[RMDB]
RNA sequence: GGGAACGACUCGAGUAGAGUCGAAAACUUCAGGGUUGUGCUUUUCAGUCAACUGUAGCUGAAUUGCAGCGUCUUAAAAUGAAGGUGGGUAAAACCCGGGAGUAUUGAUUUAUUCUGCCUGUGCCCCCUUCCGAACAAUAUUCGUAUUGUUCGGAAGAAAAGAAACAACAACAACAAC
Reactivity to 2A3 in 0.01 (KOAc 150mM, MgCl2 10mM, bicine 150mM(pH8.5), 24C), signal-to-noise 2, nucleotides 027 to 126: c000u030u030c030a030g040g020g020u000u030g040u050g020c000u000u000u010u040c000a060g030u020c060a210a130c280u150g180u280a020g010c010u000g010a000a020u030u030g010c000a050g030c020g050u000c000u080u200a270a300a120a090u090g050a050a010g020g010u050g020g000g040u080a090a090a010a000c010c000c000g000g000g000a020g000u050a050u100u110g040a030u060u060u200a070u130u030c020u040g090c000c020u020g000u080g020c020c000c000c000
Reactivity to DMS in 0.01 (KOAc 150mM, MgCl2 10mM, bicine 150mM(pH8.5), 24C), signal-to-noise 3, nucleotides 027 to 126: c020u000u000c020a060g010g010g010u000u000g020u000g010c000u000u000u000u000c010a020g020u000c080a100a140c240u010g020u010a120g010c000u000g000a020a020u000u010g010c000a050g010c050g010u000c040u010u000a050a070a120a170u020g000a030a030g000g010u010g020g020g010u010a090a070a030a090c000c000c010g000g010g000a020g010u000a060u000u000g000a080u000u000u000a070u030u000c040u000g010c010c000u010g010u000g000c010c000c020c120